[RMDB]
RNA sequence: GGGAACGACUCGAGUAGAGUCGAAAACUGGAUCCGAAGCCUCUAGAAGGAUAAUAUAGGCACUCCAUACCCUACUCCGACUCAAUACGUCCCCGUCGUACAGAAUGGUAACAUAUCUCUCCAAAUGAAAACGUUGUCUCGUUCGCGAGACAACGAACCAAAUGACACGGUUCGCCGUGUCAUUUGGAAAAGAAACAACAACAACAAC
Reactivity to 2A3 in 0.01 (KOAc 150mM, MgCl2 10mM, bicine 150mM(pH8.5), 24C), signal-to-noise 3, nucleotides 027 to 156: c020u040g010g010a040u170c010c080g060a130a060g030c060c000u060c150u160a180g010a210a060g160g030a070u120a170a070u170a070u050a090g060g010c040a030c030u020c010c010a040u050a090c020c010c020u010a030c020u000c010c020g060a050c050u010c040a020a120u090a150c050g030u040c030c010c000c030g080u070c010g000u070a090c030a050g040a120a090u050g030g000u080a070a010c020a090u080a110u060c030u000c000u000c070c020a080a110a050u140g030a060a100a030a030c000g000u000u000g000u000c010u000c010g020u060u020c090g000c000g080a000g000a000c000a000a000c000g010a000a000
An RNA of 207 nucleotides, treated with 2A3 and read out base by base. Conditions: 150 mM KOAc, 10 mM MgCl2 and 150 mM bicine (pH 8.5), 24 C. 2A3 is a SHAPE reagent: it acylates the 2'-hydroxyl of flexible nucleotides of all four kinds. 2A3 adducts were read by reverse transcription with SuperScript II with manganese.